Source information
The data come from the RNA Mapping Database (RMDB), library M2RFPK. Structure probing data (2A3 and DMS) for a 207-nucleotide construct. For 2A3, 2,907 sequencing reads were counted. For DMS, 3,909 sequencing reads were counted. The reactions ran in a buffer of 150 mM KOAc, 10 mM MgCl2 and 150 mM bicine (pH 8.5), at 24 C.

RNA sequence: GGGAACGACUCGAGUAGAGUCGAAAAGCGCAAAUCCACAAACGCCAACGAUGAGCGUUUCGCUGUAGCCGCUUAAGGCAACAGCCGGGGCCGCCUGAGCCCUGUUACCAAAGACGGCUGCCGGGGGUAAUUACUUAUUGCUUCGGCAAUAAGUAAAAGAGGAUACUAGAUUCGUCUAGUAUCCUCUAAAAGAAACAACAACAACAAC
Reactivity to 2A3 in 0.01 (KOAc 150mM, MgCl2 10mM, bicine 150mM(pH8.5), 24C), signal-to-noise 4, nucleotides 027 to 156: g030c020g000c060a050a050a060u040c050c020a110c060a130a120a020c110g030c040c040a110a050c150g160a210u120g030a040g020c020g010u010u070u080c040g000c020u010g010u030a040g010c000c010g060c210u250u220a140a140g010g010c010a040a020c000a030g000c000c020g000g000g000g000c020c100g030c020c030u040g010a030g000c000c010c000u030g030u050u070a030c020c000a030a020a000g010a020c000g030g000c000u010g050c040c040g020g000g010g000g010u010a070a100u060u000a010c000u000u000a000u000u000g000c000u030u020c160g040g000c000a000a000u000a000a000g010u010a000a000a010
Reactivity to DMS in 0.01 (KOAc 150mM, MgCl2 10mM, bicine 150mM(pH8.5), 24C), signal-to-noise 2, nucleotides 027 to 156: g040c020g040c040a040a090a100u030c050c050a060c010a030a300a050c050g030c030c040a060a170c100g000a140u010g010a160g030c040g010u000u000u000c050g000c060u000g000u000a050g040c040c000g050c190u010u010a110a190g010g020c010a030a020c010a020g020c050c050g010g010g040g050c010c030g010c090c050u010g000a220g020c000c010c020u000g010u010u000a070c050c010a050a200a210g020a090c100g000g010c020u010g050c000c030g010g000g030g040g020u000a060a130u010u000a010c000u000u000a000u000u000g020c000u010u000c300g050g010c000a000a000u000a000a000g020u010a020a010a090